[RMDB]
RNA sequence: GGGAACGACUCGAGUAGAGUCGAAAAAGAGGCGAUACGUCGCCUCAAGCUUGGUGCUUAGCUUCUUUCACCAAGCAUAUUACACGCGCAUAACCGCCAAAGGAGAAACACUGACUACGGUCAGUGAGGAAGUUGGUUCGGUUCGCCGAACCAACAACUAGCUUCAUCAGUUCGCUGAUGAAGCUAGAAAAGAAACAACAACAACAAC
Reactivity to DMS in 0.01 (KOAc 150mM, MgCl2 10mM, bicine 150mM(pH8.5), 24C), signal-to-noise 1, nucleotides 027 to 156: a070g000a020g030g000c000g000a020u000a070c270g020u000c010g010c010c010u000c010a000a080g020c000u000u000g020g000u000g030c060u010u000a030g060c070u000u000c030u000u010u010c010a060c000c010a050a050g000c010a060u000a060u000u010a170c100a090c110g020c010g000c050a090u000a050a140c080c000g020c040c100a030a080a070g000g000a110g010a100a100a190c050a020c010u000g030a030c030u010a090c300g000g010u000c010a030g000u000g020a060g000g020a070a090g010u000u020g000g040u000u010c000g050g000u010u010c300g000c000c040g040a040a000c000c000a000a000c000a070a170
Reactivity to 2A3 in 0.01 (KOAc 150mM, MgCl2 10mM, bicine 150mM(pH8.5), 24C), signal-to-noise 3, nucleotides 027 to 156: a000g010a000g010g000c000g000a000u030a040c200g100u020c000g000c000c000u000c000a010a010g000c000u000u020g000g010u010g020c040u040u060a030g040c010u030u030c010u020u010u020c000a000c000c000a000a000g000c000a010u030a000u040u130a080c120a020c060g080c000g020c070a070u050a180a050c050c010g050c070c040a060a030a010g050g000a010g010a020a100a000c000a000c000u000g000a000c000u020a010c190g090g000u000c000a000g000u000g000a000g000g040a100a070g000u010u000g000g010u000u010c000g000g060u010u050c200g040c020c000g000a000a000c000c000a000a000c000a000a000